[RMDB]
RNA sequence: GGGAACGACUCGAGUAGAGUCGAAAAGAUCACCAUGCACUUUUCCUUUCUGUUCAUUCUUGCACUUUUGGCAGUUAUUCAGGACUGCUGUAGUGUAUUGCAUGGGAUGAUAUCGGACUCAGAGGUGAGUGGUCCACCGGUUCGCCGGUGGACCACUAAAAGAAACAACAACAACAAC
Reactivity to 2A3 in 0.01 (KOAc 150mM, MgCl2 10mM, bicine 150mM(pH8.5), 24C), signal-to-noise 1, nucleotides 027 to 126: g050a070u080c080a230c150c000a000u000g030c000a000c050u060u020u020u150c060c010u090u160u140c160u140g260u250u110c000a020u060u060c000u110u030g140c000a000c000u000u000u000u300g000g000c000a000g000u000u000a030u300u060c090a010g110g030a030c000u000g000c000u000g030u000a000g000u000g000u000a170u000u090g000c000a000u020g070g000g000a000u030g000a000u140a050u120c060g000g000a020c030u000c090a020g000a000g270g050u020g090
Record summary: An RNA of 177 nucleotides, treated with 2A3 and read out base by base. 2A3 adducts were read by reverse transcription with SuperScript II with manganese. For 2A3, 337 sequencing reads were counted. Source: RMDB library OK1LIB, as collected in RNAgym. The reactions ran in a buffer of 150 mM KOAc, 10 mM MgCl2 and 150 mM bicine (pH 8.5), at 24 C.